RNA sequence: GGGAACGACUCGAGUAGAGUCGAAAAUAUAAUAUUACGUAGCAUCGCGGCGCAUAUCGGCCGUACGGCCGGCAUAUCGUAUAUAAUUACGUAGCCGUAAUCGAUCGGCGCUACGUAUAGCCGAUGCCAAAGUCAGGCCAUUCGUGGCCUGACUUUGAAAAGAAACAACAACAACAAC
Reactivity to DMS in 0.01 (KOAc 150mM, MgCl2 10mM, bicine 150mM(pH8.5), 24C), signal-to-noise 1, nucleotides 027 to 126: u000a100u010a150a120u010a180u020u000a010c020g010u000a070g040c000a000u000c020g040c050g010g000c030g000c300a050u020a030u000c050g010g010c000c030g000u010a030c200g000g040c020c010g020g000c080a020u000a050u010c030g020u000a000u000a140u000a170a080u000u000a000c020g010u010a040g030c000c020g000u010a110a100u010c220g030a090u020c070g020g030c080g020c000u000a000c040g010u000a010u020a030g040c070c040g000a110u000g020c190